[RMDB]
RNA sequence: GGGAACGACUCGAGUAGAGUCGAAAAGACGCGAACCGCGGUGUGGAUCCCGACGCGGGCCCGAGCGUACGCUCCAUCUUGUGGGGAGAAGGGGUCUGGGCUUGCCAGGGGGGCAUACUUGCCCGGGAUGGGAACACGUCUUCGGACGUGUUCCCAUAAAAGAAACAACAACAACAAC
Reactivity to 2A3 in 0.01 (KOAc 150mM, MgCl2 10mM, bicine 150mM(pH8.5), 24C), signal-to-noise 1, nucleotides 027 to 126: g150a020c040g030c010g080a160a120c020c020g010c030g000g040u110g040u010g000g190a080u000c060c000c050g000a020c000g000c000g000g000g000c050c000c000g140a040g010c130g040u140a110c050g000c000u000c000c000a070u020c040u120u160g130u100g030g050g010g120a000g010a080a130g060g010g000g000u040c040u030g000g090g000c080u040u260g040c000c000a020g030g040g000g000g020g000c000a050u100a070c020u150u230g000c020c000c020g010g010g000

Background:
An RNA of 177 nucleotides, treated with 2A3 and read out base by base. The 2A3 profile rests on 461 reads. The reactions ran in a buffer of 150 mM KOAc, 10 mM MgCl2 and 150 mM bicine (pH 8.5), at 24 C. Source: RMDB library OK1LIB, as collected in RNAgym.